[RMDB]
RNA sequence: GGGAACGACUCGAGUAGAGUCGAAAAUGGUUCCAAGGAAGGGAUGAUGUUCCAAUUGAAACUCAAGAAAAGGAUUCUGAGCCUCAGAGCUUUGAAGGAGCCACUCGUUCCCUGACCUUCCUUGAAGUGGUUACCGGUAAUUCGUUACCGGUAACCAAAAAGAAACAACAACAACAAC
Reactivity to DMS in 0.01 (KOAc 150mM, MgCl2 10mM, bicine 150mM(pH8.5), 24C), signal-to-noise 4, nucleotides 027 to 126: u020g000g020u010u000c040c010a020a010g000g020a060a010g010g010g010a110u030g000a060u040g010u000u000c020c010a090a090u020u030g000a110a070a110c020u010c030a080a100g010a130a020a090a050g000g000a110u040u000c100u010g020a070g030c140c050u040c050a080g000a090g010c010u000u000u010g020a170a150g000g000a010g000c010c020a080c070u020c010g000u000u000c000c000c020u000g000a220c000c010u000u000c000c000u000u010g000a140a120g010
Reactivity to 2A3 in 0.01 (KOAc 150mM, MgCl2 10mM, bicine 150mM(pH8.5), 24C), signal-to-noise 2, nucleotides 027 to 126: u120g050g020u110u000c050c000a010a000g000g000a000a030g110g000g010a030u210g030a030u060g150u020u000c010c000a030a040u110u140g060a070a030a030c040u040c090a070a030g070a060a200a000a030g130g000a030u060u000c040u080g020a000g040c000c000u160c100a090g030a010g030c020u060u010u020g030a050a010g000g040a010g000c000c020a020c000u020c010g010u000u000c010c000c000u000g080a000c000c000u000u000c000c000u000u010g070a050a030g100